Background
An RNA of 177 nucleotides, treated with DMS and 2A3 and read out base by base. For 2A3, 939 sequencing reads were counted. The data come from the RNA Mapping Database (RMDB), library OK2TRN.
[RMDB]
RNA sequence: GGGAACGACUCGAGUAGAGUCGAAAAGCUCUGGGUGGGGAAAGAUCUGAAGGACUAAUUCUCUGUUACUGGAGAGGGACCCUGAGAAGCUGAGCCAAGAUCAAAUGCCAUAGGAAUGUAAAGUGGCGGAAAUCAGUGUAUUCGUACACUGAUUUCCAAAAGAAACAACAACAACAAC
Reactivity to DMS in 0.01 (KOAc 150mM, MgCl2 10mM, bicine 150mM(pH8.5), 24C), signal-to-noise 2, nucleotides 027 to 126: g030c120u000c030u010g000g000g020u000g000g000g010g010a130a100a160g000a030u000c030u010g000a110a060g000g020a110c080u000a070a120u020u010c010u000c010u000g010u000u010a100c170u020g000g000a090g000a080g010g000g010a100c070c040c020u000g020a060g010a070a090g030c090u000g000a060g000c020c000a040a050g000a080u020c060a030a090a100u020g020c020c010a020u010a090g010g020a130a060u000g000u000a040a090a140g000u000g020g030c140
Reactivity to 2A3 in 0.01 (KOAc 150mM, MgCl2 10mM, bicine 150mM(pH8.5), 24C), signal-to-noise 1, nucleotides 027 to 126: g000c060u000c060u100g150g000g000u120g010g030g000g030a040a020a060g010a020u000c050u030g070a110a030g050g020a020c010u050a000a130u090u000c020u000c020u000g090u120u130a140c120u220g000g030a020g020a080g030g000g000a010c020c010c000u030g030a050g000a130a030g020c070u070g020a000g000c020c000a030a040g050a070u050c030a010a120a040u110g000c010c010a010u010a000g120g000a170a070u130g000u200a060a080a090g040u000g020g010c080